[RMDB]
RNA sequence: GGGAACGACUCGAGUAGAGUCGAAAAUUUGGGAAGUAGACUUUACAGAAAAAUUUACUUCUGAGCUAAGUCAAUCGUCUCUUGGUAGACGGUUUUUAUUUCAGUCGGGUUAUUUAACUGGAAAACGCACUCUAACUACAUUCGUGUAGUUAGAGUGAAAAGAAACAACAACAACAAC
Reactivity to 2A3 in 0.01 (KOAc 150mM, MgCl2 10mM, bicine 150mM(pH8.5), 24C), signal-to-noise 3, nucleotides 027 to 126: u150u120u140g090g040g000a090a000g020u060a020g020a060c020u070u060u090a080c080a060g210a060a070a010a060a080u210u190u070a050c010u040u010c010u030g020a010g050c030u050a040a010g030u090c040a020a000u010c000g020u000c020u000c000u090u230g150g030u190a000g020a010c000g030g010u040u000u000u010u020a020u000u020u020c000a010g010u040c010g020g000g110u090u010a090u040u160u030a130a070c020u060g030g020a020a030a030a060c060g020
Reactivity to DMS in 0.01 (KOAc 150mM, MgCl2 10mM, bicine 150mM(pH8.5), 24C), signal-to-noise 4, nucleotides 027 to 126: u000u010u010g010g010g000a080a070g020u000a090g000a060c040u010u000u000a130c090a080g000a030a060a050a100a090u000u000u010a060c060u010u000c000u000g000a070g010c100u000a020a040g010u010c200a040a010u000c000g000u000c000u000c010u010u020g030g010u020a010g000a010c000g010g010u000u000u010u000u000a020u000u000u000c000a020g010u010c070g020g000g010u000u010a050u010u000u010a060a130c020u000g000g000a040a030a060a110c250g010